[RMDB]
RNA sequence: GGGAACGACUCGAGUAGAGUCGAAAAACGAUCUACGGAUCGAAUAUGGCUGCUGAAAUUAAUAUGGUAAUUCUAGCAGACAUAAGUCCCAUGCCAAAACUAUCAUAUUAAUUUCAGCAUCCAUUAACAAUUGAAGAUGUUUCGACAUCUUCAAUUGAAAAGAAACAACAACAACAAC
Reactivity to DMS in 0.01 (KOAc 150mM, MgCl2 10mM, bicine 150mM(pH8.5), 24C), signal-to-noise 7, nucleotides 027 to 126: a080c020g000a010u000c000u000a130c200g030g010a000u000c000g000a100a050u010a020u000g000g010c040u000g000c000u000g000a000a000a000u000u000a000a010u000a000u000g000g010u000a000a030u000u000c080u010a160g020c010a080g000a040c100a150u030a100a120g010u010c030c170c090a210u010g010c010c040a050a060a030a030c070u000a000u000c000a010u000a010u010u000a010a010u000u000u000c000a000g000c000a000u000c000c000a010u010u010a070a170
Reactivity to 2A3 in 0.01 (KOAc 150mM, MgCl2 10mM, bicine 150mM(pH8.5), 24C), signal-to-noise 9, nucleotides 027 to 126: a000c010g000a000u000c010u030a040c250g120g000a000u000c010g000a020a010u170a010u020g000g000c010u000g000c000u000g000a010a000a000u000u000a000a000u010a000u000g010g000u010a010a020u040u040c070u090a030g000c000a010g020a020c010a070u300a090a070g020u020c030c030c020a070u080g000c000c000a020a060a010a020c020u010a000u010c000a000u000a000u010u000a000a000u000u000u000c000a000g000c000a000u000c000c000a000u010u040a040a020
An RNA of 177 nucleotides, treated with DMS and 2A3 and read out base by base.